An RNA of 207 nucleotides, treated with 2A3 and read out base by base. The data come from the RNA Mapping Database (RMDB), library ARCHII. The RNA was probed in 150 mM KOAc, 10 mM MgCl2 and 150 mM bicine (pH 8.5) at 24 C.
RNA sequence: GGGAACGACUCGAGUAGAGUCGAAAAGGGAGGUUGGUGGUGGACGCACUGCUCGCCAACCGGGUCAGGUCUGGAAAGAAGCAGCCCCAACGAGUUCUGGUACGGGUCAUCGUUCCAGCCUCCUAUCUAAACUCUGACUAGCUUCGGCUAGUCAGAGGUUAGACCAAGACUUCGGUCUUGGUCUAACAAAAGAAACAACAACAACAAC
Reactivity to 2A3 in 0.01 (KOAc 150mM, MgCl2 10mM, bicine 150mM(pH8.5), 24C), signal-to-noise 2, nucleotides 027 to 156: g020g000g000a010g010g010u000u010g000g010u030g010g010u020g040g000a010c020g010c030a020c010u040g000c000u000c000g040c060c060a100a120c060c060g000g000g000u100c010a010g000g020u000c000u050g070g140a250a150a050g000a030a040g000c020a000g010c000c000c000c000a000a010c000g020a010g030u160u080c140u260g030g020u060a020c000g020g050g210u020c020a020u010c020g110u210u050c000c000a000g010c010c000u010c000c000u020a030u000c020u040a060a090a060c000u000c000u000g000a000c000u000a000g000c010u030u050c300g080g000c000u010a000g000u000c000a000g000a000g000